[RMDB]
RNA sequence: GGGAACGACUCGAGUAGAGUCGAAAAUAGGUACGAUCUCGCUCACAUGAUCCAUCAUGCUAGUACAUGAGCUAGACAGAUACAUGACAUGACUACUAUGGAUCUGGAUCCAUGCGCUCGAUCCUAGGGGUUAGAAUUGUUUCGACAAUUCUAACCCAAAAGAAACAACAACAACAAC
Reactivity to 2A3 in 0.01 (KOAc 150mM, MgCl2 10mM, bicine 150mM(pH8.5), 24C), signal-to-noise 3, nucleotides 027 to 126: u180a020g030g030u090a050c020g000a040u000c030u030c050g000c000u010c010a090c000a060u100g020a000u030c030c000a030u060c010a000u100g040c050u010a020g000u060a140c020a050u060g000a060g140c020u020a050g060a090c060a040g120a070u170a110c070a070u070g040a020c010a020u040g020a010c030u030a000c010u040a060u010g070g010a050u020c090u030g020g010a010u050c050c020a020u080g010c020g020c040u020c030g050a040u040c010c000u020a050g080
Reactivity to DMS in 0.01 (KOAc 150mM, MgCl2 10mM, bicine 150mM(pH8.5), 24C), signal-to-noise 3, nucleotides 027 to 126: u010a050g020g020u000a120c050g000a050u010c060u000c060g050c030u000c100a160c020a060u000g020a010u000c020c010a080u010c090a030u010g010c150u000a060g000u000a080c090a020u020g010a070g020c050u000a100g010a090c170a100g000a120u010a030c070a100u020g000a170c060a010u010g010a110c040u000a050c080u000a040u000g000g000a030u000c000u000g040g000a030u000c070c070a120u000g020c100g020c190u000c030g020a070u000c020c010u010a110g020